[RMDB]
RNA sequence: GGGAACGACUCGAGUAGAGUCGAAAAUGGCCCUCACGUGGUCCCCGUGGACAUGAGUGGCCGAGGAGGUGAGCCCUAUGACGAUGUCGACACAGACACUGCGUGAGGCGGCUCGUCUUAUGGACGAACUUUGCAGUAGAUUCGUCUACUGCAAAGUAAAAGAAACAACAACAACAAC
Reactivity to 2A3 in 0.01 (KOAc 150mM, MgCl2 10mM, bicine 150mM(pH8.5), 24C), signal-to-noise 6, nucleotides 027 to 126: u060g030g020c000c020c000u000c010a060c080g200u170g060g060u050c030c010c030c090g100u250g040g000a030c010a060u040g020a010g040u250g030g000c020c010g000a080g040g060a040g010g050u080g020a030g010c000c000c000u080a130u130g070a040c030g020a030u060g000u010c010g060a070c030a010c030a290g040a030c020a020c140u130g030c020g010u030g040a050g050g030c080g000g000c010u010c010g000u000c000u050u110a210u160g090g020a020c030g010a090
Reactivity to DMS in 0.01 (KOAc 150mM, MgCl2 10mM, bicine 150mM(pH8.5), 24C), signal-to-noise 8, nucleotides 027 to 126: u010g010g000c040c000c000u000c000a030c120g020u000g010g000u000c010c010c100c210g010u000g000g000a050c030a120u000g000a040g010u010g040g020c010c010g010a080g010g010a060g010g000u010g000a100g010c020c000c010u010a080u000g000a080c040g000a080u000g000u000c010g010a170c180a120c210a140g000a050c070a040c100u000g010c040g020u000g010a090g010g010c150g010g000c040u000c000g010u000c000u000u010a110u010g000g000a080c070g010a090